An RNA of 207 nucleotides, treated with 2A3 and DMS and read out base by base.
As a SHAPE reagent, 2A3 marks flexible, mostly unpaired nucleotides at the ribose 2'-OH.
Source: RMDB library OK3TST, as collected in RNAgym.

[RMDB]
RNA sequence: GGGAACGACUCGAGUAGAGUCGAAAAAAGAGUUUAUUCAAGGACCAAAUGGAGCUGUUUCUACAAAAUCAUGUAUUUCCAUUAUUAUUGUCUAACCUGGGAUAUCUUCGAGCUAGAUCUUGCUGGGUACUUCAUGCAUUUAGUUCUUUGAAGUUCCAAACAUAGCGUUGUUCGCAACGCUAUGUUUAAAAGAAACAACAACAACAAC
Reactivity to 2A3 in 0.01 (KOAc 150mM, MgCl2 10mM, bicine 150mM(pH8.5), 24C), signal-to-noise 3, nucleotides 027 to 156: a000a000g180a030g030u210u170u110a100u110u110c030a040a020g030g000a020c030c020a010a060a090u060g020g030a040g010c020u010g050u110u090u010c060u060a070c050a040a090a020a040u060c050a040u060g060u110a190u060u160u040c020c010a000u010u040a020u050u040a120u050u140g020u000c070u040a060a080c010c010u030g000g000g020a000u020a040u060c050u070u060c090g030a030g030c040u030a010g000a050u020c010u050u090g060c010u030g000g010g050u050a060c010u040u040c010a030u070g020c000a010u040u060u100a030g030u000u080c000u070u050u070g010a030a000g020u070u000c000c000
Reactivity to DMS in 0.01 (KOAc 150mM, MgCl2 10mM, bicine 150mM(pH8.5), 24C), signal-to-noise 2, nucleotides 027 to 156: a080a080g020a100g020u010u010u000a090u020u000c030a060a080g010g000a080c040c030a020a070a060u010g030g020a100g050c050u000g000u000u000u010c020u000a240c100a090a050a070a070u000c040a100u010g010u020a060u000u010u010c040c010a130u010u000a100u000u000a050u000u000g030u000c020u010a050a070c030c020u010g030g010g020a090u010a080u000c040u000u010c060g010a070g020c030u000a040g020a010u000c050u000u000g020c030u000g000g020g050u010a020c080u000u000c030a040u000g040c060a110u000u000u010a080g010u010u000c030u000u000u000g010a050a290g020u000u000c050c020